Structure probing data (2A3 and DMS) for a 207-nucleotide construct.
The data come from the RNA Mapping Database (RMDB), library RSTRND.
Conditions: 150 mM KOAc, 10 mM MgCl2 and 150 mM bicine (pH 8.5), 24 C.
[RMDB]
RNA sequence: GGGAACGACUCGAGUAGAGUCGAAAAUGCUGUUUACCUUCGUCAUUGGGGUGAACGGGACUCUUAGAUGACUGGGCCCGGAUCAGCUACUUGUUUGCAGGAUAGCUGGGGCCGAGAAAAUCCGACGCAAACUGCGCCCGGAGAAGCCCUGACAACACUUAGAAGAAUGGUUCGCCAUUCUUCUAAGAAAAGAAACAACAACAACAAC
Reactivity to 2A3 in 0.01 (KOAc 150mM, MgCl2 10mM, bicine 150mM(pH8.5), 24C), signal-to-noise 4, nucleotides 027 to 156: u100g010c000u000g010u020u010u020a030c000c000u030u070c030g030u000c030a030u030u100g000g010g000g000u000g010a010a010c000g000g010g020a100c030u070c020u200u240a040g000a030u040g010a020c020u050g000g000g000c000c010c000g020g010a070u120c000a000g020c000u010a010c010u050u050g130u270u210u230g150c020a010g030g050a230u000a010g000c010u000g010g000g020g030c000c000g010a030g000a040a040a010a020u000c000c010g060a030c020g040c020a120a190a260c100u100g010c020g040c070c240c030g010g010a030g020a050a010g020c020c000c030u040g010a040c030a090a000c030a030
Reactivity to DMS in 0.01 (KOAc 150mM, MgCl2 10mM, bicine 150mM(pH8.5), 24C), signal-to-noise 2, nucleotides 027 to 156: u000g020c000u000g000u000u010u010a000c010c000u000u010c060g040u010c130a110u000u030g010g000g000g010u010g010a050a070c010g050g000g010a060c010u000c060u000u000a080g060a090u000g010a090c070u010g030g000g030c000c020c020g030g020a160u000c020a040g030c010u000a020c020u000u000g020u010u000u000g040c090a150g030g010a120u000a040g020c000u000g010g020g030g000c030c010g000a070g000a060a060a130a240u000c000c000g000a030c020g000c010a120a100a190c200u010g000c040g020c020c020c130g020g010a050g010a110a130g000c040c000c010u000g070a240c090a070a110c050a150